[RMDB]
RNA sequence: GGGAACGACUCGAGUAGAGUCGAAAAGUAUUAGCGGGAAUGUGGGUAGGCGUAAUGGGCGUAAACGUGCUGCCUUCCACCGCGAUGUUGAUGAUUAUGUGUCUGAAUUUGAUGGGGGCAGGCGGCCAUCGCACCAGUAUUUCGAUACUGGUGCGAUAAAAGAAACAACAACAACAAC
Reactivity to DMS in 0.01 (KOAc 150mM, MgCl2 10mM, bicine 150mM(pH8.5), 24C), signal-to-noise 2, nucleotides 027 to 126: g010u040a100u030u000a150g030c070g000g020g010a140a050u020g010u010g010g010g010u000a100g000g010c050g000u010a060a070u000g000g020g030c050g000u010a050a070a130c150g040u010g000c010u000g010c000c000u000u000c070c040a100c020c000g000c040g000a040u000g010u000u010g000a070u000g010a110u000u020a090u010g010u030g010u000c030u000g000a100a060u010u010u000g020a130u000g010g000g010g000g000c060a020g000g000c010g010g000c020c070
Reactivity to 2A3 in 0.01 (KOAc 150mM, MgCl2 10mM, bicine 150mM(pH8.5), 24C), signal-to-noise 2, nucleotides 027 to 126: g080u090a050u300u140a110g000c010g000g070g070a130a200u150g070u080g040g000g000u040a080g050g000c030g030u110a070a080u060g000g070g000c080g030u080a060a140a000c100g030u160g150c000u000g000c000c000u030u010c050c020a020c110c000g000c010g050a030u080g070u090u130g030a060u020g020a050u000u160a160u300g170u090g020u000c020u000g060a110a090u040u080u210g290a300u190g030g010g000g010g000c000a000g020g000c000g020g020c000c000

This 177-nucleotide RNA was probed chemically with DMS and 2A3.
Reactivities are given for positions 27 through 126.
The reactions ran in a buffer of 150 mM KOAc, 10 mM MgCl2 and 150 mM bicine (pH 8.5), at 24 C.